[RMDB]
RNA sequence: GGGAACGACUCGAGUAGAGUCGAAAAGAGUGGAGGAAAUCUCGGAAAGCUUCCCCCAAGAAGAACUGGGACGCUCUCAAGAAGGAGGAGAUUUCCCGAAAGCUGGAGACUCGCGGAAUUUCAUUCAUCAAAAGGUAAGGUUCGCCUUACCUUUUGAAAAAGAAACAACAACAACAAC
Reactivity to DMS in 0.01 (KOAc 150mM, MgCl2 10mM, bicine 150mM(pH8.5), 24C), signal-to-noise 1, nucleotides 027 to 126: g000a040g030u000g000g010a190g010g000a010a010a050u000c010u000c040g000g020a050a110a010g030c030u000u010c070c000c000c220c040a070a190g010a130a120g000a120a170c120u010g010g010g030a040c110g000c010u040c050u000c050a090a110g010a070a060g010g010a090g020g000a060g000a020u010u010u000c000c010c000g030a120a070a070g010c020u010g030g010a220g010a030c030u000c000g000c050g000g020a090a010u020u000u000c030a060u000u000c120a140